About this RNA: Chemical mapping of a 207-nucleotide RNA with 2A3. For 2A3, 645 sequencing reads were counted. The data come from the RNA Mapping Database (RMDB), library M2RFPK.
RNA sequence: GGGAACGACUCGAGUAGAGUCGAAAAACAACAUGCCCAGGUAGCCCAGACCUUCAAGGCUACGGUGCGUUGCGACGCACGGUCUGAUUCUUCACAACGACGUUCACCGCGUCUUCUUCCAUCCGCCUCCAGCGCACGAAGUUCGCUUCGUGCGCAACCGUGAUAGUGUGUUCGCACACUAUCACGGAAAAGAAACAACAACAACAAC
Reactivity to 2A3 in 0.01 (KOAc 150mM, MgCl2 10mM, bicine 150mM(pH8.5), 24C), signal-to-noise 1, nucleotides 027 to 156: a010c080a020a030c050a070u210g060c020c000c050a000g020g020u000a000g010c000c000c090a020g000a000c010c000u000u000c030a030a030g000g000c020u020a030c000g010g040u000g000c030g000u000u060g080c200g120a010c000g090c000a000c000g020g000u010c000u030g030a040u010u140c090u160u120c070a020c020a270a050c140g010a010c020g120u150u250c020a020c200c030g000c000g050u000c000u020u050c010u050u000c060c050a120u070c050c010g000c020c060u100c030c000a010g000c000g000c000a000c000g000a010a010g000u060u080c070g010c090u000u000c000g020u020g020c000g000c000a000a000
The RNA was probed in 150 mM KOAc, 10 mM MgCl2 and 150 mM bicine (pH 8.5) at 24 C.